This 177-nucleotide RNA was probed chemically with DMS and 2A3. The reactions ran in a buffer of 150 mM KOAc, 10 mM MgCl2 and 150 mM bicine (pH 8.5), at 24 C. For DMS, 4,115 sequencing reads were counted.
RNA sequence: GGGAACGACUCGAGUAGAGUCGAAAAUGCUGAGCUUUCGAGCUCAGCAGAGGCAAGCAAGCAGCGCAAGGAGACAAGACGAGCAUAAGAUCGAGCAUGCUACAAUACGGCACUUCGGUGCCGUAAAAGAUGCUAAUUGGUUCGCCAAUUAGCAUCUAAAAGAAACAACAACAACAAC
Reactivity to DMS in 0.01 (KOAc 150mM, MgCl2 10mM, bicine 150mM(pH8.5), 24C), signal-to-noise 4, nucleotides 027 to 126: u010g010c000u010g010a000g000c010u000u010u030c170g020a020g020c000u010c000a000g020c000a010g000a060g000g030c060a080a080g020c060a080a060g020c050a050g010c090g010c050a040a100g000g000a110g010a050c080a050a070g010a090c100g010a050g010c040a040u000a080a080g000a080u000c090g000a080g010c070a050u010g000c050u000a060c150a080a120u010a010c000g000g000c000a010c000u000u000c170g020g010u000g010c000c000g000u000a000a020a050
Reactivity to 2A3 in 0.01 (KOAc 150mM, MgCl2 10mM, bicine 150mM(pH8.5), 24C), signal-to-noise 3, nucleotides 027 to 126: u020g010c000u000g010a000g010c010u040u060u230c250g070a000g000c010u000c000a000g000c000a000g000a000g020g020c040a020a060g000c020a060a020g040c020a010g020c000g020c050a000a050g050g020a040g030a020c040a080a020g050a070c060g030a020g050c020a030u050a160a050g030a090u110c040g010a010g010c020a010u060g030c020u050a050c020a020a070u030a060c010g000g000c010a000c000u030u050c220g030g000u010g000c020c010g000u000a000a000a000